[RMDB]
RNA sequence: GGGAACGACUCGAGUAGAGUCGAAAAAAGAUAUGGAAGUUCACCUUCUUUGAUCGUGGGUGAAGAAGAAUGGUCGGAAACGACCAUUUGUAAAGCCCACGGGAGAAGAUGAACUUCCUAAGUCAAAUCAACUUAAUCUCUUCGGAGAUUAAGUUGAAAAAGAAACAACAACAACAAC
Reactivity to DMS in 0.01 (KOAc 150mM, MgCl2 10mM, bicine 150mM(pH8.5), 24C), signal-to-noise 2, nucleotides 027 to 126: a140a090g010a000u010a010u000g000g010a030a010g020u010u000c000a010c020c000u000u010c000u000u000u010g000a010u010c000g010u000g000g000g010u010g000a010a080g030a240a300g000a010a000u000g000g000u000c000g000g000a010a000a010c000g030a000c000c000a000u000u010u000g010u000a010a060a300g000c010c000c010a000c000g000g000g000a010g010a030a010g000a010u000g000a010a000c010u000u000c010c000u000a000a040g000u000c000a130a070a280
Reactivity to 2A3 in 0.01 (KOAc 150mM, MgCl2 10mM, bicine 150mM(pH8.5), 24C), signal-to-noise 1, nucleotides 027 to 126: a000a040g010a010u030a010u070g000g000a000a000g000u010u000c000a010c020c000u010u050c000u300u270u000g000a010u000c010g000u030g010g010g020u050g080a250a300g010a000a000g020a090a080u010g000g020u000c010g020g000a010a010a000c010g000a000c020c000a000u000u000u010g000u000a010a000a020g040c020c000c010a010c020g000g010g000a010g000a010a010g000a000u010g010a010a000c000u000u000c000c000u000a000a010g000u010c010a030a050a180

Source information:
The record gives the reactivity of an RNA of 177 nucleotides to DMS and 2A3. As a SHAPE reagent, 2A3 marks flexible, mostly unpaired nucleotides at the ribose 2'-OH. It was measured as part of the RMDB library TTRDES. DMS adducts were read by reverse transcription with MarathonRT. The reactions ran in a buffer of 150 mM KOAc, 10 mM MgCl2 and 150 mM bicine (pH 8.5), at 24 C. In probing experiments dimethyl sulfate is read out at A N1 and C N3, which are open when not base-paired. The DMS profile rests on 2,107 reads.